[RMDB]
RNA sequence: GGGAACGACUCGAGUAGAGUCGAAAAGCACUAUUCACAAUAGCAAAGACAAGGAAUCAACAACGAUAGAUUGUAUAAAGAAAAUGUGGUACAGAUAGACCAUGGAAUACUGUGCAGCCAUAAAAUGGAAUCAGAUCAUGUCCUUUGCAGGGACAUACGUAUGAGUACUCUUCGGAGUACUCAUACGAAAAGAAACAACAACAACAAC
Reactivity to 2A3 in 0.01 (KOAc 150mM, MgCl2 10mM, bicine 150mM(pH8.5), 24C), signal-to-noise 4, nucleotides 027 to 156: g000c020a020c050u050a090u050u070c050a020c030a140a160u080a070g010c040a030a100a030g040a070c040a040a030g070g020a030a060u140c030a060a090c010a030a060c040g050a030u080a160g050a040u080u090g050u080a070u110a100a120a040g120a080a070a010a020u130g020u040g070g000u030a080c020a020g030a070u070a050g030a010c000c020a020u040g040g020a110a060u070a100c040u050g020u030g040c010a010g000c000c020a040u100a090a090a020a010u080g040g040a020a020u050c020a040g030a070u080c030a010u060g000u000c030c000u060u050u150g050c100a040g000g000g020a000c000a000u050a010
Reactivity to DMS in 0.01 (KOAc 150mM, MgCl2 10mM, bicine 150mM(pH8.5), 24C), signal-to-noise 2, nucleotides 027 to 156: g010c030a100c020u000a090u010u010c060a110c060a050a060u010a080g020c000a070a060a060g000a050c030a090a180g000g020a070a050u000c020a060a080c050a050a050c030g020a110u020a080g010a060u000u000g010u000a090u000a070a040a030g000a110a040a050a070u000g080u000g000g050u010a070c020a040g000a200u000a080g010a030c070c020a070u000g000g000a100a030u010a070c030u020g000u000g000c010a060g030c020c020a040u000a030a010a080a150u000g010g000a060a090u010c080a110g000a150u000c100a030u000g030u000c000c000u000u000u020g020c220a210g020g010g010a020c000a040u000a020